Structure probing data (2A3) for a 207-nucleotide construct. For 2A3, 844 sequencing reads were counted.
[RMDB]
RNA sequence: GGGAACGACUCGAGUAGAGUCGAAAAAUCAUCUGAAGAUCAGCUAUUAGAAGAGAAAGAUCAGUUAAGUCCUUUGUACCUGAUCAGCUUGAUACAAGAACUACUGAUUUCAACUUCUUUGGCUUAAAAAAGGCCACAGAGUUCGCUCUGUGGCCAAGCAUUAAGCUUUCUUCGGAAAGCUUAAUGCAAAAGAAACAACAACAACAAC
Reactivity to 2A3 in 0.01 (KOAc 150mM, MgCl2 10mM, bicine 150mM(pH8.5), 24C), signal-to-noise 2, nucleotides 027 to 156: a000u030c050a030u030c060u130g130a110a030g030a180u090c050a010g000c010u100a100u220u090a220g000a010a020g020a010g070a040a040a020g010a030u010c000a000g030u010u090a080a010g000u010c020c020u120u080u130g020u010a010c000c030u050g080a210u240c040a010g270c010u070u060g000a050u060a010c030a000a020g000a050a000c010u040a010c000u070g020a020u010u010u100c060a090a100c020u000u010c000u020u040u030g000g000c000u000u030a080a080a000a000a000a000g000g000c000c000a010c000a000g000a010g040u050u070c110g030c070u000c000u000g000u000g010g000c000c000a000a000
Conditions: 150 mM KOAc, 10 mM MgCl2 and 150 mM bicine (pH 8.5), 24 C.